This 177-nucleotide RNA was probed chemically with DMS and 2A3. The data come from the RNA Mapping Database (RMDB), library OK2TRN. The reactions ran in a buffer of 150 mM KOAc, 10 mM MgCl2 and 150 mM bicine (pH 8.5), at 24 C. 2A3 adducts were read by reverse transcription with SuperScript II with manganese. The 2A3 profile rests on 1,372 reads. Values cover nucleotides 27 to 126.
RNA sequence: GGGAACGACUCGAGUAGAGUCGAAAACGCGGCCCAAGGCAAAGUACCGAUGCUGAAUACCCGGGCGGAGAAGGCGAUCGCGGGUUUCGUCGAGAUGUUCGACGAGCUGCGGGGCCGCCUCGAUGACACAACGUAACGUCUUCGGACGUUACGUUGUAAAAGAAACAACAACAACAAC
Reactivity to DMS in 0.01 (KOAc 150mM, MgCl2 10mM, bicine 150mM(pH8.5), 24C), signal-to-noise 2, nucleotides 027 to 126: c120g010c090g010g030c020c000c010a060a210g000g000c030a040a100a130g020u010a090c110c060g020a060u000g010c050u000g010a090a140u000a150c060c040c060g010g010g000c030g010g000a140g020a100a110g000g000c000g000a060u000c010g000c000g010g010g010u000u010u000c000g010u000c010g000a030g010a140u020g000u000u000c020g020a010c000g000a010g020c000u000g000c010g000g000g010g000c010c000g010c060c040u000c020g000a150u000g000a100c200
Reactivity to 2A3 in 0.01 (KOAc 150mM, MgCl2 10mM, bicine 150mM(pH8.5), 24C), signal-to-noise 2, nucleotides 027 to 126: c060g010c040g050g020c000c000c010a050a020g040g000c060a100a130a050g110u060a110c060c030g050a020u060g000c030u110g030a120a030u100a140c030c020c000g060g000g000c130g070g000a130g050a120a030g030g000c060g050a070u030c030g000c030g190g020g030u050u290u030c000g000u000c010g010a000g040a210u300g170u290u000c010g000a010c020g000a030g040c000u060g050c000g010g030g030g000c030c000g000c010c000u030c040g070a080u140g020a020c020